[RMDB]
RNA sequence: GGGAACGACUCGAGUAGAGUCGAAAAACGUCACUCUAAACCGUCGCAGAUAAAUAUAACUGCUAAAAAUACACAAACUUACGCUUUAGCUGCCUAAACCACAGCCGGCGUGCCAGACUUUCGUUCGCCUAUGACGAUUUGAUGGCCUAAUUUAGUACUCAUUGUUUUUGUUCGCAAAAACAAUGAGAAAAGAAACAACAACAACAAC
Reactivity to 2A3 in 0.01 (KOAc 150mM, MgCl2 10mM, bicine 150mM(pH8.5), 24C), signal-to-noise 5, nucleotides 027 to 156: a000c030g050u040c040a030c070u070c040u090a060a100a100c060c010g080u090c070g010c020a010g050a140u130a120a230a010u210a030u080a190a150c020u030g000c010u070a080a080a010a040a030u220a050c070a000c030a080a120a030c040u140u100a000c000g020c010u030u080u220a020g000c000u000g000c000c000u040a050a020a010c010c010a000c010a010g000c000c030g030g000c010g000u010g000c000c000a030g030a170c000u010u050u010c020g020u040u060c060g080c070c030u150a170u220g020a010c010g020a020u030u000u070g050a020u010g010g000c010c010u080a140a150u110u090u140a040g020u060a030
Reactivity to DMS in 0.01 (KOAc 150mM, MgCl2 10mM, bicine 150mM(pH8.5), 24C), signal-to-noise 1, nucleotides 027 to 156: a050c030g000u000c010a100c050u000c030u000a000a030a050c030c000g020u000c060g020c030a040g050a210u000a080a080a110u030a100u010a090a230c020u010g010c020u000a020a060a060a090a090u000a080c050a060c080a080a020a080c080u000u000a030c010g020c050u000u020u040a020g000c020u000g030c000c000u020a070a160a110c150c300a030c000a020g000c020c060g020g010c030g040u000g000c050c080a070g000a090c000u000u000u000c010g020u000u000c030g070c040c020u000a110u000g000a040c010g000a080u020u000u000g020a100u000g000g000c030c020u000a050a040u000u010u000a030g050u000a160